[RMDB]
RNA sequence: GGGAACGACUCGAGUAGAGUCGAAAAGAUAUGGAUCUACAGCGGGAGCUGUCAAUCGGAAACGAUUGGUCAGCGAGGAUCGCUGACGGAUCCUAAGUCAAAACCGAAGCUCUUCGGAGCUUCGGAACAUUCUAGAACUGUUCGCAGUUCUAGAAUGAAAAGAAACAACAACAACAAC
Reactivity to 2A3 in 0.01 (KOAc 150mM, MgCl2 10mM, bicine 150mM(pH8.5), 24C), signal-to-noise 2, nucleotides 027 to 126: g010a010u030a010u080g010g010a000u000c010u060a090c020a010g000c010g000g070g060a100g000c010u000g020u030c010a000a000u010c010g000g020a020a010a000c020g000a010u010u010g020g100u280c010a000g000c010g020a140g020g040a070u030c010g000c010u020g080a170c250g020g000a000u000c000c000u000a020a000g010u000c020a020a000a090a150c000c000g010a010a000g010c000u010c010u110u230c300g150g000a010g000c000u000u000c000g000g000a000a000
Reactivity to DMS in 0.01 (KOAc 150mM, MgCl2 10mM, bicine 150mM(pH8.5), 24C), signal-to-noise 5, nucleotides 027 to 126: g000a030u000a130u010g000g010a020u000c000u000a140c020a020g020c000g020g010g010a070g030c000u000g010u000c000a000a010u000c000g010g000a040a030a070c000g000a010u000u000g000g000u020c010a010g020c000g000a130g030g010a070u010c020g020c000u000g000a080c230g000g000a010u000c000c000u000a010a090g000u000c010a100a070a150a190c000c000g010a020a000g000c000u000c000u000u010c220g030g000a010g000c000u010u000c000g010g010a040a080
Chemical mapping of a 177-nucleotide RNA with 2A3 and DMS.
For DMS the reverse transcriptase was MarathonRT.
Source: RMDB library TTRDES, as collected in RNAgym.
The 2A3 profile rests on 15,816 reads.
The RNA was probed in 150 mM KOAc, 10 mM MgCl2 and 150 mM bicine (pH 8.5) at 24 C.